[RMDB]
RNA sequence: GGGAACGACUCGAGUAGAGUCGAAAAGAUAUGGAUCCUUGGUGGGAGCUGUGGGUCGGAAACGACCCAUACAGCUGUGAACACCACUGGGAUCCUAAGUCAAACCAAUUGGGUUCGCCCAAUUGGACGUUAAUACAGGGUUCGCCCUGUAUUAACGAAAAGAAACAACAACAACAAC
Reactivity to DMS in 0.01 (KOAc 150mM, MgCl2 10mM, bicine 150mM(pH8.5), 24C), signal-to-noise 6, nucleotides 027 to 126: g010a020u000a040u010g000g000a010u000c000c000u000u010g050g020u000g010g020g010a030g040c000u000g020u000g010g010g010u000c000g020g000a010a020a020c000g000a010c000c000c010a010u010a070c080a030g030c000u010g030u020g000a200a170c160a090c000c010a030c140u000g010g000g000a010u000c000c000u000a000a060g000u000c010a180a140a270c000c000a000a010u000u000g000g010g010u000u020c300g020c000c000c000a010a010u000u000g000g010a070